[RMDB]
RNA sequence: GGGAACGACUCGAGUAGAGUCGAAAAGAUAUGGAAAACGUUCGAUAAGCUCGUUUCGGAAACGAAACCGGAGCUUUUGACGAACUAUUCCUAAGUCAAAACAAAUAGAGCUUCGGCUCUAUUUGAAGCAAUAAAUAAGGUUCGCCUUAUUUAUUGCAAAAGAAACAACAACAACAAC
Reactivity to 2A3 in 0.01 (KOAc 150mM, MgCl2 10mM, bicine 150mM(pH8.5), 24C), signal-to-noise 3, nucleotides 027 to 126: g000a010u050a020u080g020g010a000a020a010a020c090g010u000u020c020g020a190u050a300a050g010c000u010c000g010u000u010u000c000g000g020a040a030a010c000g000a000a030a020c040c120g300g050a010g000c000u030u030u040u110g040a010c000g010a000a010c000u020a050u000u020c000c000u020a060a030g030u020c030a000a010a090a200c010a000a020a010u010a010g010a000g000c010u070u080c300g180g000c000u000c000u000a000u000u000u000g000a020a010
Reactivity to DMS in 0.01 (KOAc 150mM, MgCl2 10mM, bicine 150mM(pH8.5), 24C), signal-to-noise 6, nucleotides 027 to 126: g010a020u000a300u010g000g000a020a000a060a180c300g000u000u000c000g010a130u010a030a010g000c000u000c010g000u010u010u000c000g000g000a070a060a110c010g000a000a000a000c080c300g050g000a000g010c000u000u000u010u010g010a210c070g020a020a010c010u000a300u000u000c000c000u000a040a140g010u010c040a080a080a100a270c000a000a010a010u000a000g000a010g010c010u000u010c300g040g010c000u000c000u000a000u000u000u000g000a110a110